[RMDB]
RNA sequence: GGGAACGACUCGAGUAGAGUCGAAAAGGCCUGAUGCCACGUCUCUGGUAGCUACAUGCUUUGACCAGAGAUGCUAUGAUCAGGCCGAUACAAAAGUCGUUUCACAUGUUGAUAGGAACCUGGGGACUUUCCGUAAGGUAUUCGUACCUUACGGAAAAAAAGAAACAACAACAACAAC
Reactivity to DMS in 0.01 (KOAc 150mM, MgCl2 10mM, bicine 150mM(pH8.5), 24C), signal-to-noise 7, nucleotides 027 to 126: g010g010c000c000u000g000a010u010g020c160c130a300c020g000u000c000u000c000u000g000g000u000a020g010c010u010a090c260a100u050g010c010u010u030u040g020a010c010c000a000g000a010g000a010u000g010c130u010a160u030g000a050u000c010a010g000g020c010c000g000a030u010a010c030a020a130a150a010g000u000c000g010u000u000u000c000a070c160a100u010g000u000u000g000a070u020a040g000g000a030a030c020c090u010g000g000g000g000a170c160
Reactivity to 2A3 in 0.01 (KOAc 150mM, MgCl2 10mM, bicine 150mM(pH8.5), 24C), signal-to-noise 2, nucleotides 027 to 126: g010g010c040c000u010g000a010u050g150c160c140a020c020g000u020c010u000c000u000g000g000u000a040g010c050u120a160c070a300u300g000c000u140u100u120g140a030c000c000a000g000a000g000a000u000g010c010u020a080u190g020a000u000c000a000g000g030c000c000g010a000u000a000c010a000a050a000a000g000u000c000g020u010u000u040c090a120c010a090u100g040u110u030g090a170u120a070g050g040a030a000c000c050u050g000g010g000g050a030c000